Source: RMDB library 15KREP, as collected in RNAgym. Structure probing data (DMS and 2A3) for a 177-nucleotide construct. For DMS the reverse transcriptase was MarathonRT. For DMS, 9,217 sequencing reads were counted. The reactions ran in a buffer of 150 mM KOAc, 10 mM MgCl2 and 150 mM bicine (pH 8.5), at 24 C. The 2A3 profile rests on 4,998 reads.
RNA sequence: GGGAACGACUCGAGUAGAGUCGAAAAAGGACAUGGCCUCAAGAUUUGCUGAUGGGCUCUGCUUAUUUUGGAACUGUAAUGUACCAAAAUAUCCUAAUAAUGCAAUUGUAUGCAGGUUUGACACACGGCAUAGUAUACUGUUCGCAGUAUACUAUGCAAAAGAAACAACAACAACAAC
Reactivity to DMS in 0.01 (KOAc 150mM, MgCl2 10mM, bicine 150mM(pH8.5), 24C), signal-to-noise 7, nucleotides 027 to 126: a070g010g020a100c060a020u000g000g000c010c020u010c100a110a120g000a170u000u010u010g010c020u010g000a170u010g000g000g000c070u000c150u000g000c060u000u000a030u000u000u000u010g010g000a130a020c010u000g010u010a090a080u010g010u000a070c000c000a010a000a010a000u000a040u000c010c010u000a080a090u010a080a120u010g000c020a010a070u000u010g010u000a070u000g010c040a050g010g000u000u010u000g020a090c110a040c140a070c200g000
Reactivity to 2A3 in 0.01 (KOAc 150mM, MgCl2 10mM, bicine 150mM(pH8.5), 24C), signal-to-noise 4, nucleotides 027 to 126: a000g050g010a040c020a050u050g020g000c000c000u030c030a040a050g020a160u110u100u230g090c030u050g030a080u090g000g010g010c010u020c010u040g020c010u030u010a010u040u020u000u020g010g000a010a010c010u030g060u290a080a100u180g010u020a050c000c000a000a000a030a000u030a020u030c000c010u030a080a060u130a110a030u080g000c010a010a040u060u130g070u090a060u090g000c010a020g060g050u030u090u120g090a070c050a010c020a020c090g060